The record gives the reactivity of an RNA of 177 nucleotides to 2A3 and DMS. Reactivities are given for positions 27 through 126. It was measured as part of the RMDB library TTRDEL. High 2A3 reactivity points to a flexible backbone, as in loops and unpaired stretches.

[RMDB]
RNA sequence: GGGAACGACUCGAGUAGAGUCGAAAAGAUAUGGAGGCAGCUUUUGACGAACAUUGUUCGGAAACGAACACCUCGGGUUCGAUAAGCUGCUCCUAAGUCAAAACAUUAACUCUUCGGAGUUAAUGAACACCUUAAUGCGGUUCGCCGCAUUAAGGUGAAAAGAAACAACAACAACAAC
Reactivity to 2A3 in 0.01 (KOAc 150mM, MgCl2 10mM, bicine 150mM(pH8.5), 24C), signal-to-noise 2, nucleotides 027 to 126: g050a040u050a040u140g030g000a040g130g300c000a000g020c050u090u090u190u230g300a150c050g000a040a000c020a120u170u060g020u040u000c020g010g040a040a040a020c020g000a000a000c020a080c000c090u200c150g300g010g030u030u000c020g020a000u020a060a020g000c010u000g030c000u000c000c000u020a060a020g050u020c020a050a020a120a120c020a000u000u010a010a010c010u010c000u070u080c290g160g000a000g000u000u000a000a000u000g000a030a040
Reactivity to DMS in 0.01 (KOAc 150mM, MgCl2 10mM, bicine 150mM(pH8.5), 24C), signal-to-noise 2, nucleotides 027 to 126: g000a030u000a300u020g000g000a030g030g020c020a010g010c000u010u010u010u010g010a140c150g010a010a010c030a190u010u000g030u010u000c010g010g000a040a090a220c020g000a010a010c000a030c300c160u000c150g030g010g000u000u000c010g050a110u000a020a020g010c000u000g000c000u000c000c000u020a100a110g010u000c020a120a130a150a190c000a000u000u010a020a010c010u000c010u000u000c130g000g000a020g010u000u000a000a000u000g000a060a250